[RMDB]
RNA sequence: GGGAACGACUCGAGUAGAGUCGAAAAAUCUUGUAUAUGCCCUGAGGCACUUUGAUCAAAAUAGCGAAGUGCUUAAGGCUAUCUUAGUGAAGUAUGGUUGCUGUGAUGUUACCUACUUUGAAAAUAACCGGAACGGGGUUCGCCCCGUUCAAAAGAAACAACAACAACAAC
Reactivity to DMS in 0.01 (KOAc 150mM, MgCl2 10mM, bicine 150mM(pH8.5), 24C), signal-to-noise 4, nucleotides 027 to 129: a060u010c100u020u020g030u040a040u020a030u040g030c060c020c030u020g040a050g050g010c000a020c000u000u000u000g030a100u030c110a110a110a170a100u000a000g000c020g020a000a030g050u010g060c070u020u000a040a040g010g010c000u000a030u020c000u020u050a100g030u030g000a060a010g000u020a060u050g010g020u010u030g030c030u050g030u070g080a100u040g030u000u000a040c000c000u070a000c040u010u000u010g030a050a050a050a140u050a110a120c080c080g000
Reactivity to 2A3 in 0.01 (KOAc 150mM, MgCl2 10mM, bicine 150mM(pH8.5), 24C), signal-to-noise 7, nucleotides 027 to 129: a000u050c050u060u090g110u030a030u000a020u230g010c020c000c010u000g070a100g020g020c000a000c010u000u010u020g090a140u210c200a130a130a090a140u140a060g040c000g010a000a000g000u000g000c000u010u020a000a040g000g000c010u010a000u000c040u100u160a090g020u030g120a010a000g000u020a020u300g010g000u030u040g000c030u060g110u150g240a150u180g030u030u020a000c000c000u000a010c000u020u000u040g010a020a030a010a020u130a060a060c050c040g080